[RMDB]
RNA sequence: GGGAACGACUCGAGUAGAGUCGAAAAGGAUCUGGAGAAGGACCGGGAACGCUUCGCGAUCAGCGCCGGCGGCGUGGUCGCCGUGGGCAAGGGUGUUUGGAUCUAGGUCCGGUUAGCGGCGCGAGCAUCCCUUGGGAUUUUUCGAAAUCCCAAGGGAAAAAGAAACAACAACAACAAC
Reactivity to DMS in 0.01 (KOAc 150mM, MgCl2 10mM, bicine 150mM(pH8.5), 24C), signal-to-noise 2, nucleotides 027 to 126: g020g000a020u000c020u000g010g010a040g030a300a180g010g020a010c040c020g000g000g010a090a120c180g000c040u000u000c140g020c020g000a050u000c020a090g030c050g000c020c020g020g030c130g030g000c010g050u000g010g010u010c000g000c030c070g010u010g000g000g010c010a100a120g000g010g020u000g000u010u000u000g000g000a300u000c000u000a030g030g000u000c010c000g000g010u000u010a070g030c050g000g010c030g000c060g010a060g000c090a170
Reactivity to 2A3 in 0.01 (KOAc 150mM, MgCl2 10mM, bicine 150mM(pH8.5), 24C), signal-to-noise 1, nucleotides 027 to 126: g000g000a000u000c000u020g030g010a020g040a070a060g030g020a010c040c000g040g120g030a120a020c070g030c030u140u130c110g030c030g080a110u040c000a080g110c020g030c010c010g220g080c080g040g000c020g040u120g100g070u120c020g000c030c060g030u160g000g080g000c050a010a030g220g000g010u230g020u060u000u060g040g000a000u010c010u000a000g000g040u000c010c000g000g000u030u030a010g000c040g010g000c000g020c030g030a010g040c000a060